[RMDB]
RNA sequence: GGGAACGACUCGAGUAGAGUCGAAAAUACGCCGCGCGCGCGCGAUACGCAUAGCGCGCCGCAUAGCGAUAUAUUAUAUACGCGCGUAUAUACGCGCGUAUCGCAUAAUAGCGCGCAUAGCGGCGUAUGAAGGGGUGAUAUUCGUAUCACCCCUUCAAAAAGAAACAACAACAACAAC
Reactivity to 2A3 in 0.01 (KOAc 150mM, MgCl2 10mM, bicine 150mM(pH8.5), 24C), signal-to-noise 1, nucleotides 027 to 126: u030a000c000g000c000c000g040c000g000c000g000c000g000c000g000c000g060a060u040a100c000g000c080a040u070a040g050c000g020c000g000c020c040g010c000a010u040a000g030c000g020a000u010a010u000a030u160u090a060u080a000u000a120c050g000c000g000c000g140u020a110u020a000u060a300c060g070c010g020c030g120u000a010u000c000g010c000a010u060a230a060u090a300g030c030g000c020g000c040a030u060a080g000c000g020g000c000g000u000a000
Reactivity to DMS in 0.01 (KOAc 150mM, MgCl2 10mM, bicine 150mM(pH8.5), 24C), signal-to-noise 2, nucleotides 027 to 126: u000a020c000g020c010c000g050c000g010c150g010c030g030c000g020c030g000a130u000a050c100g030c080a090u000a090g020c090g020c070g010c050c110g030c090a060u000a090g000c040g010a080u020a080u000a090u000u010a090u000a060u000a020c060g010c010g010c000g010u000a130u040a100u000a010c010g000c040g000c010g030u000a000u010c100g000c080a080u010a060a090u020a140g000c000g000c000g030c050a120u000a210g000c000g010g000c000g010u010a000